[RMDB]
An RNA of 177 nucleotides, treated with DMS and read out base by base. Source: RMDB library TTRINS, as collected in RNAgym. The reactions ran in a buffer of 150 mM KOAc, 10 mM MgCl2 and 150 mM bicine (pH 8.5), at 24 C. For DMS, 1,137 sequencing reads were counted.
RNA sequence: GGGAACGACUCGAGUAGAGUCGAAAAGAUAUGGAUAUCAGAGAGUCCUCAUGCUGCAGCAACAGCUUAUGUAUCGGAAACGAUACUAAGACAUGCUGGGCAUGAGGACUCUCUGAUAUCCUAAGUCCGAUAUAGAGGCGUUCGCGCCUCUAUAUCGAAAAGAAACAACAACAACAAC
Reactivity to DMS in 0.01 (KOAc 150mM, MgCl2 10mM, bicine 150mM(pH8.5), 24C), signal-to-noise 1, nucleotides 027 to 126: g010a070u000a300u010g010g010a000u000a000u000c000a000g000a040g000a030g020u000c010c000u030c000a010u010g010c000u010g000c020a020g020c000a050a090c300a280g000c000u000u030a010u010g030u000a020u020c000g030g000a140a160a250c000g000a010u000a000c000u000a030a000g000a060c150a250u010g010c000u000g000g020g020c000a000u000g010a010g020g030a000c000u000c000u010c000u000g000a010u000a000u000c000c000u000a000a090g010u000c040